Chemical mapping of a 207-nucleotide RNA with 2A3. The RNA was probed in 150 mM KOAc, 10 mM MgCl2 and 150 mM bicine (pH 8.5) at 24 C.
RNA sequence: GGGAACGACUCGAGUAGAGUCGAAAAGGGAUGCUACAAUGUGGAGAGGAUAUUCAACGCCUAAAGUUCGUUCCCGUCUAUCGCAAGACACCAGUUACUGAACAUGUCCUGUUGGAAAGAGAACAUGUUGAAGUAAUGAUGAACUGCAAACCGCCUCGACAAGCCCCAUGUUCGCAUGGGGCUUGUCAAAAGAAACAACAACAACAAC
Reactivity to 2A3 in 0.01 (KOAc 150mM, MgCl2 10mM, bicine 150mM(pH8.5), 24C), signal-to-noise 1, nucleotides 027 to 156: g060g030g000a080u050g000c030u040a040c080a040a080u140g000u060g070g000a060g000a010g010g030a040u040a080u220u200c000a040a080c080g060c000c040u110a300a020a030g060u230u000c000g000u000u000c010c040c000g030u010c020u100a210u070c100g000c040a040a000g010a000c010a020c010c040a080g010u040u000a000c000u010g000a000a000c000a000u010g000u070c000c020u060g000u060u040g100g150a030a060a010g080a000g070a020a000c010a020u060g000u010u000g100a090a050g000u010a030a000u000g020a010u020g000a010a020c010u020g000c080a000a000a060c040c010g040c060c030u070c050